[RMDB]
RNA sequence: GGGAACGACUCGAGUAGAGUCGAAAACCAUGGACCGCGCUGCGGCACCAUGCCCACGCGUCAUGAAACCAUGAGGUCCGACCAGGCGCAUUAACUUGUCCUCGUAGGCGUCCGUCCUACGUCCGACCAACUCUCUAUCCUUCGGGAUAGAGAGUUGAAAAGAAACAACAACAACAAC
Reactivity to 2A3 in 0.01 (KOAc 150mM, MgCl2 10mM, bicine 150mM(pH8.5), 24C), signal-to-noise 2, nucleotides 027 to 126: c040c010a020u020g010g020a030c030c010g060c020g060c160u180g000c070g000g000c030a100c010c110a080u170g000c000c000c000a050c100g010c000g040u060c020a100u080g060a130a030a040c040c010a060u130g050a120g000g050u030c000c000g020a040c040c030a040g030g010c010g000c020a040u100u150a080a060c080u070u110g010u050c000c010u040c020g010u010a010g030g020c020g110u080c060c100g060u140c010c000u020a020c020g000u000c020c040g010a030c010
Reactivity to DMS in 0.01 (KOAc 150mM, MgCl2 10mM, bicine 150mM(pH8.5), 24C), signal-to-noise 2, nucleotides 027 to 126: c220c020a070u020g020g010a220c060c030g040c010g050c250u010g110c090g030g010c020a050c110c100a030u010g010c010c010c040a100c160g000c000g040u000c010a050u010g000a120a110a120c110c020a110u000g020a120g000g010u010c050c000g000a110c070c060a070g010g000c070g010c050a070u020u010a090a180c060u010u000g020u010c040c040u000c030g000u000a000g030g000c010g020u010c120c070g000u020c000c000u000a050c050g000u000c070c150g010a270c190
Source: RMDB library RFMREP, as collected in RNAgym. Structure probing data (2A3 and DMS) for a 177-nucleotide construct. 2A3 adducts were read by reverse transcription with SuperScript II with manganese. DMS adducts were read by reverse transcription with MarathonRT.